[RMDB]
RNA sequence: GGGAACGACUCGAGUAGAGUCGAAAAUACUUAUGAAAUGAAACUGUGAUAGCAUCUAUAUCGAGUUUAGGUAGAUCCAUUUUAAAUUUACCGAAUGUUUGCACACUAUCAGAAUGAAAUGGGACAUUAAACUUAUGUGCUAUCUUUGCGAUUGCCGUGAACUAAGAGCUUUCGAGCUCUUAGUUCAAAAAGAAACAACAACAACAAC
Reactivity to DMS in 0.01 (KOAc 150mM, MgCl2 10mM, bicine 150mM(pH8.5), 24C), signal-to-noise 1, nucleotides 027 to 156: u000a030c100u000u010a180u000g010a180a150a090u010g000a130a110a090c110u010g000u010g000a090u010a020g000c010a040u000c110u010a080u000a120u020c090g010a100g010u000u000u000a030g010g010u000a040g020a110u000c000c000a100u000u000u000u000a060a060a090u000u020u000a090c070c030g040a040a140u000g010u000u010u010g010c200a140c030a030c030u000a170u000c010a060g000a000a170u010g000a020a010a030u010g040g030g040a260c050a040u000u000a000a010a050c030u000u010a110u010g020u000g030c010u000a020u000c010u000u000u000g020c000g030a160u000u000g010c020c110g020
Reactivity to 2A3 in 0.01 (KOAc 150mM, MgCl2 10mM, bicine 150mM(pH8.5), 24C), signal-to-noise 2, nucleotides 027 to 156: u100a010c050u200u100a110u190g030a030a090a120u110g000a070a050a030c080u100g060u090g190a000u000a000g030c040a000u000c090u210a050u100a040u300c150g020a010g020u000u000u000a030g040g020u020a000g020a060u000c000c000a010u070u060u020u030a160a300a140u070u140u070a150c010c020g030a010a040u140g040u000u050u260g060c090a040c000a000c000u100a040u170c020a010g080a100a040u090g030a000a080a000u000g000g010g000a000c030a050u050u040a000a020a000c000u060u010a060u180g000u000g040c000u000a000u000c000u050u060u100g070c040g030a030u200u140g020c000c090g060